[RMDB]
Structure probing data (DMS and 2A3) for a 207-nucleotide construct. Source: RMDB library RSTRND, as collected in RNAgym. 2A3 adducts were read by reverse transcription with SuperScript II with manganese. The 2A3 profile rests on 8,648 reads.
RNA sequence: GGGAACGACUCGAGUAGAGUCGAAAAGGUGGCUAACGAUAGAACUUUCGCGUUGGUCGGAAGAGCAGCGGUAUAGUGCGAAGGUUAUACUGAUGGACUAGGCUGACGGUCAUAGUGCGACUGUAAACAAAGCAUGUGGUCGCACCCCACACCCUCCGGACAGUUAUAGGUUCGCCUAUAACUGUCCAAAAGAAACAACAACAACAAC
Reactivity to DMS in 0.01 (KOAc 150mM, MgCl2 10mM, bicine 150mM(pH8.5), 24C), signal-to-noise 2, nucleotides 027 to 156: g020g020u000g010g000c030u020a030a070c030g000a110u000a070g000a100a090c060u010u000u000c030g010c040g030u000u000g000g010u000c000g000g000a080a110g020a120g020c050a120g020c040g000g020u000a050u000a070g020u010g010c060g020a110a160g000g000u000u000a050u000a040c010u000g010a070u010g010g020a090c040u010a090g010g030c030u000g010a050c060g000g020u000c020a080u010a050g010u000g040c000g020a070c020u000g000u000a060a100a220c090a030a070a170g030c090a090u010g020u020g030g010u000c010g000c020a030c010c020c020c010a080c020a080c120c000c020u000c010c140
Reactivity to 2A3 in 0.01 (KOAc 150mM, MgCl2 10mM, bicine 150mM(pH8.5), 24C), signal-to-noise 7, nucleotides 027 to 156: g050g000u050g010g010c030u040a070a020c050g070a090u080a170g100a080a060c070u060u090u040c050g010c020g050u030u050g030g030u040c030g020g030a120a040g030a020g030c040a000g010c010g000g030u070a050u030a090g040u050g050c050g050a070a020g060g010u020u010a040u030a050c030u030g030a090u090g020g040a030c030u020a030g000g040c020u020g020a030c020g020g000u050c030a080u060a080g020u010g010c000g010a010c010u050g090u250a090a090a090c100a060a110a030g100c070a060u120g040u030g050g000u000c010g000c000a010c000c000c000c000a030c010a020c010c010c000u050c030c030